Source: RMDB library M2RFPK, as collected in RNAgym. Structure probing data (DMS and 2A3) for a 207-nucleotide construct. In probing experiments dimethyl sulfate is read out at A N1 and C N3, which are open when not base-paired. For DMS, 3,017 sequencing reads were counted.
RNA sequence: GGGAACGACUCGAGUAGAGUCGAAAACGUUGUCAUCGACAACACCCUAUGCAUUCAUGCUCUGUAAGGAUGCGCGGAAAGGUGAGCAAGCCCGAGUUGCCCAGACCUGAAAUGCAACACUUUAGAGAAAACCCGAAGCAGUUCGCUGCUUCGGGAAGGAAAUAUAACAGUUCGCUGUUAUAUUUCCAAAAGAAACAACAACAACAAC
Reactivity to DMS in 0.01 (KOAc 150mM, MgCl2 10mM, bicine 150mM(pH8.5), 24C), signal-to-noise 2, nucleotides 027 to 156: c060g010u000u000g040u020c010a260u010c090g000a130c010a060a030c000a120c010c000c020u010a110u000g020c020a040u000u000c100a150u000g000c050u000c080u000g030u000a080a060g000g020a080u000g020c090g080c050g010g030a050a050a030g000g030u000g010a140g050c150a040a120g000c050c090c050g000a070g040u000u000g030c030c000c020a140g000a040c050c030u000g020a060a110a090u000g000c030a080a100c080a100c040u000u010u000a050g000a110g010a070a040a090a180c010c000c000g020a000a020g000c020a070g020u000u000c300g030c010u020g030c000u000u000c000g000g020g000a000a020
Reactivity to 2A3 in 0.01 (KOAc 150mM, MgCl2 10mM, bicine 150mM(pH8.5), 24C), signal-to-noise 4, nucleotides 027 to 156: c070g010u020u010g010u010c080a220u130c290g010a000c000a020a010c000a070c010c000c020u060a070u100g000c020a020u000u080c030a040u140g030c040u020c040u110g100u110a030a030g020g000a010u010g050c000g000c010g000g000a030a050a040g020g040u040g030a060g000c050a040a010g000c020c050c010g010a030g030u030u030g050c020c000c000a030g040a090c030c020u050g050a040a050a050u100g030c030a100a000c040a050c100u120u140u170a080g010a020g010a070a120a030a020c010c000c000g000a000a000g010c000a000g000u050u130c160g020c120u000g000c000u000u000c000g000g000g000a000a000